[RMDB]
RNA sequence: GGGAACGACUCGAGUAGAGUCGAAAACUCCACCUUCUUCAUCUGUGGCAUGAUGAUGCGGACGCCGAAUGCCUGGGCGAUUUCUUCCGGCGAGUAGCGCUUGGAAUAGUCGGCGCUGUACAGGCGCGCCAUGGCAUAUCUUCGGAUAUGCCAUGGCAAAAGAAACAACAACAACAAC
Reactivity to DMS in 0.01 (KOAc 150mM, MgCl2 10mM, bicine 150mM(pH8.5), 24C), signal-to-noise 2, nucleotides 027 to 126: c070u000c020c030a150c100c030u010u000c000u000u000c040a030u000c050u000g020u000g020g020c110a070u010g000a050u010g030a060u000g030c180g000g020a130c060g010c020c010g000a060a070u000g010c080c010u000g010g010g020c020g000a110u010u000u010c080u000u000c050c020g020g010c020g000a260g020u000a080g030c030g010c010u000u070g030g010a060a040u010a090g010u000c050g000g000c010g000c050u010g010u010a060c160a070g010g020c030g070c160
Reactivity to 2A3 in 0.01 (KOAc 150mM, MgCl2 10mM, bicine 150mM(pH8.5), 24C), signal-to-noise 2, nucleotides 027 to 126: c020u050c010c000a060c020c030u050u080c010u090u060c020a060u050c030u030g120u100g190g040c080a050u120g030a010u030g010a020u080g070c050g050g020a080c040g020c060c020g060a150a030u110g000c010c000u070g020g020g000c030g050a040u040u100u000c020u040u010c040c020g050g000c030g020a060g070u150a060g050c000g000c030u090u300g050g060a070a020u050a030g070u090c040g030g070c060g030c040u040g020u050a060c020a040g000g060c020g000c060
Source information: Structure probing data (DMS and 2A3) for a 177-nucleotide construct. DMS adducts were read by reverse transcription with MarathonRT. The data come from the RNA Mapping Database (RMDB), library OK2TST.